[RMDB]
RNA sequence: GGGAACGACUCGAGUAGAGUCGAAAAGUACCAGCAGAGAUACGGAUAAUUUCAAGCGAUGAAAUUGCAUGACUUAUAAGAACGACGUAUGCGAACAGUGCAGGGUCAUUGAGGCCGAGAAUCAAGGUGUUCCUAGCUAUUUCGAUAGCUAGGAACAAAAAGAAACAACAACAACAAC
Reactivity to 2A3 in 0.01 (KOAc 150mM, MgCl2 10mM, bicine 150mM(pH8.5), 24C), signal-to-noise 2, nucleotides 027 to 126: g120u010a120c000c000a010g040c060a100g000a020g000a020u010a090c010g020g020a040u010a100a090u040u050u000c040a030a000g080c020g070a010u030g000a000a010a010u000u010g010c020a000u070g020a000c000u120u000a090u160a250a130g020a050a010c010g130a000c020g050u110a050u040g020c050g030a030a010c000a020g000u050g000c040a070g010g000g000u040c030a040u020u080g010a020g000g000c000c000g000a000g000a020a000u100c060a000a030g130g000
Reactivity to DMS in 0.01 (KOAc 150mM, MgCl2 10mM, bicine 150mM(pH8.5), 24C), signal-to-noise 5, nucleotides 027 to 126: g010u000a100c050c010a140g020c100a090g010a120g000a080u020a030c020g000g030a050u010a030a040u010u010u000c030a060a150g020c070g000a060u010g000a000a010a130u010u000g000c010a040u010g010a050c230u000u000a090u020a070a110g030a040a120c110g000a100c050g000u020a020u020g010c040g000a070a090c100a120g000u020g000c030a050g020g000g010u000c080a090u030u000g000a040g000g000c020c040g030a110g000a090a040u020c100a040a100g000g000
Chemical mapping of a 177-nucleotide RNA with 2A3 and DMS. The RNA was probed in 150 mM KOAc, 10 mM MgCl2 and 150 mM bicine (pH 8.5) at 24 C. For 2A3 the reverse transcriptase was SuperScript II with manganese. The 2A3 profile rests on 2,377 reads. Values are in units of 0.01, from 0 to 300, in steps of 10. The DMS profile rests on 8,273 reads. The data come from the RNA Mapping Database (RMDB), library OK1LIB.